[RMDB]
RNA sequence: GGGAACGACUCGAGUAGAGUCGAAAACCAUGAGACCGUAACUUUCGUAGUCAUUGAUAAAGGGGCAGGUCUCGCUCUUUUGUCAUUGCGGUUGCCUAGAGGCAUGGUCGUUUACCGCGACUUGCCAAUACGAAGAGGGCCUUCGGGCCCUCUUCAAGUUAACCACUACGUUCGCGUAGUGGUUAACAAAAGAAACAACAACAACAAC
Reactivity to 2A3 in 0.01 (KOAc 150mM, MgCl2 10mM, bicine 150mM(pH8.5), 24C), signal-to-noise 2, nucleotides 027 to 156: c000c000a080u090g050a020g030a020c010c020g050u100a050a110c030u120u220u170c130g030u070a040g100u080c100a120u140u000g020a010u030a000a030a040g010g010g000g000c060a080g040g250u040c120u070c090g000c000u000c000u000u010u000u010g020u010c010a010u020u030g020c030g020g000u010u030g050c020c020u160a130g010a100g080g000c000a040u100g080g000u010c000g020u030u110u120a120c050c030g000c000g000a000c010u000u000g000c000c010a060a070u190a120c120g010a000a000g000a000g000g010g020c000c000u020u050c170g120g010g000c000c000c020u000c000u000u000c000a010a000
Reactivity to DMS in 0.01 (KOAc 150mM, MgCl2 10mM, bicine 150mM(pH8.5), 24C), signal-to-noise 1, nucleotides 027 to 156: c040c020a100u000g020a060g000a010c030c020g000u010a100a100c130u000u000u010c130g030u000a120g010u010c160a140u010u000g000a020u010a010a020a040g000g020g010g000c020a100g020g010u010c040u000c000g000c010u000c010u000u000u000u000g000u000c010a090u000u000g000c100g000g080u000u010g010c000c060u000a110g020a230g030g010c000a030u000g030g030u000c000g000u010u000u010a110c240c260g000c000g000a040c010u000u000g050c020c020a080a150u010a120c120g010a030a040g020a060g000g000g000c010c000u000u000c300g060g060g030c010c000c000u000c000u000u000c000a020a120
Source information
Structure probing data (2A3 and DMS) for a 207-nucleotide construct. The DMS profile rests on 2,651 reads. The reactions ran in a buffer of 150 mM KOAc, 10 mM MgCl2 and 150 mM bicine (pH 8.5), at 24 C.